[RMDB]
RNA sequence: GGGAACGACUCGAGUAGAGUCGAAAAACAGCAUAACUAACAACUGUUUUCGUCCUUAAACCAACGAUAACAGCUGUUAGGCCAUGUUUUGUAACGGCUGUUAGGAGCGCUGUUAAGGAGUGUUAACGCCUAUACCCACUUUCGAGUGGGUAUAGGCAAAAGAAACAACAACAACAAC
Reactivity to 2A3 in 0.01 (KOAc 150mM, MgCl2 10mM, bicine 150mM(pH8.5), 24C), signal-to-noise 4, nucleotides 027 to 126: a010c000a010g040c020a040u060a120a070c000u010a020a010c010a000a000c000u010g000u000u010u000u020c020g000u010c040c030u110u130a120a050a030c080c040a010a010c010g000a010u000a030a000c000a000g000c010u010g010u020u010a000g000g010c020c030a120u060g060u000u150u050u110g130u040a060a010c030g040g010c000u030g080u080u070a090g050g070a050g020c030g000c040u020g000u030u010a030a030g090g040a100g030u080g020u030u070a040a030c050
Reactivity to DMS in 0.01 (KOAc 150mM, MgCl2 10mM, bicine 150mM(pH8.5), 24C), signal-to-noise 3, nucleotides 027 to 126: a030c020a030g020c030a040u000a080a190c010u000a010a000c010a010a010c000u000g020u000u020u000u000c000g000u000c150c140u010u000a110a090a150c300c300a090a020c000g020a030u000a000a000c000a030g010c040u000g000u000u000a000g010g020c110c120a080u010g000u000u010u000u000g000u000a010a030c110g020g000c000u000g010u010u020a040g020g050a090g010c060g000c010u020g000u000u010a060a070g010g010a130g020u000g010u000u000a100a080c200